RNA sequence: GGGAACGACUCGAGUAGAGUCGAAAAUUAUGUGCAUUACAUAUACCAUUUGAUUCUGGCAACCUAAUGAAGGAGUAUGAUCAUUUCCCCUAUUUAACAGACAAGAACAAGAAGAGGGAGGGCAGAUGGUGUGGUAGUCUAAGGCACAGGCUCCAGACCCAUUUAUGGUAUUCGUACCAUAAAUGGGAAAAGAAACAACAACAACAAC
Reactivity to 2A3 in 0.01 (KOAc 150mM, MgCl2 10mM, bicine 150mM(pH8.5), 24C), signal-to-noise 6, nucleotides 027 to 156: u140u060a060u060g030u020g050c060a040u080u170a060c020a040u190a010u020a100c020c020a040u090u020u110g090a090u100u030c030u040g030g010c040a090a080c030c010u130a160a100u170g060a080a060g030g010a020g070u100a130u150g080a090u070c080a110u050u050u080c000c010c000c010u030a100u130u160u080a090a040c030a030g120a050c050a110a020g050a120a010c050a080a000g100a060a020g020a070g010g020g000a020g020g020g000c010a010g020a040u050g000g070u050g000u020g040g020u010a020g000u000c040u060a020a040g050g010c010a000c010a050g030g000c010u010c020c020a060g020a100
Reactivity to DMS in 0.01 (KOAc 150mM, MgCl2 10mM, bicine 150mM(pH8.5), 24C), signal-to-noise 3, nucleotides 027 to 156: u000u000a040u000g020u000g010c070a090u000u010a060c070a090u000a100u000a090c020c010a130u000u000u010g010a110u000u000c020u010g020g020c050a060a150c040c030u000a060a090u010g000a120a050g050g020a090g030u000a040u010g010a080u030c040a140u010u000u000c000c000c000c070u000a130u000u000u000a070a130c110a120g020a140c070a060a140g000a060a100c100a060a100g000a080a080g010a130g040g030g000a100g010g010g010c020a070g000a090u020g010g030u000g020u000g010g040u000a070g020u000c070u000a050a050g010g030c040a030c040a030g000g020c050u010c010c020a070g010a300

Structure probing data (2A3 and DMS) for a 207-nucleotide construct.
It was measured as part of the RMDB library OK3TST.
The 2A3 profile rests on 3,546 reads.
The reactions ran in a buffer of 150 mM KOAc, 10 mM MgCl2 and 150 mM bicine (pH 8.5), at 24 C.